[RMDB]
RNA sequence: GGGAACGACUCGAGUAGAGUCGAAAAUUGGGUAGGGUGUGCCGCUUUAUUGUUGUCGGCGUGUAGUAGUGAGCCUGUUCAGCAGGCGACAGCGGCGCACGUAGCGCCAGGUUUAAAAGCGUCGAUAUCAUUUACGCGCGUUCGCGCGCGUAAAUGAAAAAGAAACAACAACAACAAC
Reactivity to DMS in 0.01 (KOAc 150mM, MgCl2 10mM, bicine 150mM(pH8.5), 24C), signal-to-noise 1, nucleotides 027 to 126: u000u000g010g000g020u000a080g050g010g030u000g010u000g010c020c020g000c070u000u000u010a070u000u000g030u000u000g040u000c000g000g010c020g030u040g020u000a070g020u000a060g000u000g020a300g020c010c000u000g000u000u020c250a150g040c010a040g000g040c000g020a060c170a150g020c010g000g000c010g010c000a060c100g000u010a090g000c080g010c000c010a050g000g030u000u000u010a070a040a070a270g060c010g020u000c000g020a020u010a100